[RMDB]
RNA sequence: GGGAACGACUCGAGUAGAGUCGAAAAGAUAUGGAAUCGUCGGGAGUCGGAGAAGGGUCGGAAACGACCCGUAACGACGACGAUCGAGCGAUUCCUAAGUCAAAACUAUAGAGUUCGCUCUAUAGAACCCAAAGUAGAAGUUCGCUUCUACUUUGGGAAAAGAAACAACAACAACAAC
Reactivity to DMS in 0.01 (KOAc 150mM, MgCl2 10mM, bicine 150mM(pH8.5), 24C), signal-to-noise 2, nucleotides 027 to 126: g000a040u010a300u000g010g030a030a010u000c010g050u010c000g000g000g010a220g020u000c000g010g000a250g020a190a180g000g000g010u010c000g010g000a040a040a230c000g010a020c010c000c020g030u000a050a140c010g030a120c010g030a050c120g020a200u000c000g010a060g010c030g010a010u000u000c000c000u000a030a040g020u000c030a100a090a090a210c000u000a010u000a000g000a000g020u000u010c230g010c010u000c010u000a000u000a010g000a060a170
Reactivity to 2A3 in 0.01 (KOAc 150mM, MgCl2 10mM, bicine 150mM(pH8.5), 24C), signal-to-noise 1, nucleotides 027 to 126: g040a030u040a040u120g000g000a020a030u010c000g020u000c000g060g000g000a000g030u000c020g030g040a100g060a180a190g050g030g010u000c020g010g000a100a040a020c000g000a000c000c030c020g000u000a030a020c010g000a020c040g010a050c010g030a010u020c030g010a040g160c030g000a010u000u060c000c010u020a050a010g020u010c030a020a010a100a210c020u030a020u020a010g010a000g030u060u140c290g100c080u000c000u000a010u020a000g030a070a040
An RNA of 177 nucleotides, treated with DMS and 2A3 and read out base by base. Values cover nucleotides 27 to 126. Values are in units of 0.01, from 0 to 300, in steps of 10. The RNA was probed in 150 mM KOAc, 10 mM MgCl2 and 150 mM bicine (pH 8.5) at 24 C. For 2A3 the reverse transcriptase was SuperScript II with manganese.